[RMDB]
RNA sequence: GGGAACGACUCGAGUAGAGUCGAAAACUUCUUGCUUCAGGUAAGUGCUCAUCUCCAGAUGGAGGUAGAAAGACUUAUAGUCCAAAGCUAUGUCCUAGAACAUCAGAAAACAACCACCCCUGAUCCUAUGGAUGACCCCUGCUUCAGCCAUCGGAGAACCGGUCAGUAAUUUCGAUUACUGACCGGUAAAAGAAACAACAACAACAAC
Reactivity to 2A3 in 0.01 (KOAc 150mM, MgCl2 10mM, bicine 150mM(pH8.5), 24C), signal-to-noise 2, nucleotides 027 to 156: c000u040u060c010u000u120g010c000u070u060c100a050g050g030u040a030a060g020u060g020c020u000c060a060u000c010u000c000c010a080g040a220u150g050g020a020g020g010u050a020g120a040a100a000g000a020c020u100u140a080u120a180g040u060c080c070a050a100a040g010c000u030a050u090g010u000c020c050u090a040g040a050a030c020a070u070c010a020g110a050a110a030a040c090a070a060c050c060a070c000c030c000c010u000g000a020u010c000c000u040a050u170g020g000a020u050g100a060c010c010c020c040u020g000c050u020u000c000a020g020c010c010a050u070c010g000g040a050g000a040
Reactivity to DMS in 0.01 (KOAc 150mM, MgCl2 10mM, bicine 150mM(pH8.5), 24C), signal-to-noise 1, nucleotides 027 to 156: c110u000u010c040u000u000g000c050u010u020c090a140g000g000u020a040a130g040u010g020c050u010c070a140u000c040u000c020c020a240g060a230u020g040g020a020g000g060u000a020g010a100a110a120g010a100c020u000u010a040u000a110g020u010c020c060a060a120a200g000c040u000a100u000g010u000c000c020u000a090g020a060a060c040a100u000c060a090g020a140a100a030a100c020a060a150c010c050a090c000c040c090c020u020g000a110u000c020c020u000a020u040g030g040a060u000g010a130c030c000c090c010u020g030c040u000u020c020a010g000c090c030a060u000c060g020g000a050g010a100
Conditions: 150 mM KOAc, 10 mM MgCl2 and 150 mM bicine (pH 8.5), 24 C. An RNA of 207 nucleotides, treated with 2A3 and DMS and read out base by base. For 2A3 the reverse transcriptase was SuperScript II with manganese. The data come from the RNA Mapping Database (RMDB), library OK3TST.